[RMDB]
RNA sequence: GGGAACGACUCGAGUAGAGUCGAAAAGUUCUGAACAUAGGGACAUAAGUUCAUUCAUGCCAAGUAUCUUUCCAGCAUGUUUCUCCCAUUUAGAAUAUCUAGCAUGUAAGGCCUUUCAAUAUUAAUACAACAUUGUUUUGUUCGCAAAACAAUGUUGAAAAGAAACAACAACAACAAC
Reactivity to DMS in 0.01 (KOAc 150mM, MgCl2 10mM, bicine 150mM(pH8.5), 24C), signal-to-noise 3, nucleotides 027 to 126: g000u000u010c020u010g010a140a120c060a090u010a090g000g000g000a030c060a110u010a070a090g010u000u010c050a080u000u000c080a010u010g010c040c080a100a150g010u010a020u010c040u010u010u020c080c080a120g010c060a050u030g000u000u000u000c050u000c010c010c030a110u010u000u000a070g010a100a050u000a050u010c030u000a090g020c030a040u000g010u010a080a070g030g000c060c040u000u000u010c130a090a060u000a080u020u010a090a120u020a140
Reactivity to 2A3 in 0.01 (KOAc 150mM, MgCl2 10mM, bicine 150mM(pH8.5), 24C), signal-to-noise 3, nucleotides 027 to 126: g010u000u000c020u030g030a070a020c040a090u110a110g000g000g030a000c000a050u200a140a060g020u060u070c020a020u120u070c010a010u050g030c020c000a090a030g050u020a100u090c040u030u090u060c020c020a000g000c010a030u000g000u020u090u010c020u020c000c010c010a030u100u090u100a050g020a070a030u040a030u230c030u040a020g000c010a030u060g040u050a070a050g040g020c010c000u020u130u060c040a060a030u070a050u300u210a100a090u110a110
This 177-nucleotide RNA was probed chemically with DMS and 2A3. DMS adducts were read by reverse transcription with MarathonRT. The DMS profile rests on 1,961 reads. The RNA was probed in 150 mM KOAc, 10 mM MgCl2 and 150 mM bicine (pH 8.5) at 24 C. High DMS reactivity at an A or C suggests that its Watson-Crick edge is free. It was measured as part of the RMDB library RFMREP.